RNA sequence: GGGAACGACUCGAGUAGAGUCGAAAAGAUGAGCCAAUCUUGGAGUCUGACUGGAUUUACUUUCAUCCUGAUGUGAGUAAGGUUUUGGACAAGUGGAAACCUGAUUCCACGGAAUGGGGAGAAAACAACAGAGGAGGUAAUUCGUUACCUCCUCUGUAAAAGAAACAACAACAACAAC
Reactivity to DMS in 0.01 (KOAc 150mM, MgCl2 10mM, bicine 150mM(pH8.5), 24C), signal-to-noise 5, nucleotides 027 to 126: g010a040u030g010a180g020c070c040a090a050u010c050u030u000g010g010a120g030u000c010u010g000a230c060u010g000g000a070u020u030u020a090c060u010u000u030c030a060u000c060c060u010g010a120u020g000u010g010a050g010u000a110a030g010g000u000u010u000u020g000g000a140c170a060a130g000u020g000g000a040a020a070c070c030u000g000a130u030u010c020c010a020c080g010g000a040a050u010g000g020g010g020a070g020a090a050a040a060c240a090
Reactivity to 2A3 in 0.01 (KOAc 150mM, MgCl2 10mM, bicine 150mM(pH8.5), 24C), signal-to-noise 4, nucleotides 027 to 126: g100a040u130g010a010g080c020c020a070a050u040c060u010u070g030g010a030g040u030c010u010g080a100c000u060g070g010a040u020u060u050a150c020u070u070u120c010a080u060c030c020u120g080a200u090g080u030g050a010g010u040a010a010g090g010u020u020u050u070g170g030a080c110a130a090g100u080g110g040a020a010a020c000c010u030g050a090u040u090c010c020a020c080g000g020a090a080u120g020g010g040g020a040g020a040a050a030a050c090a010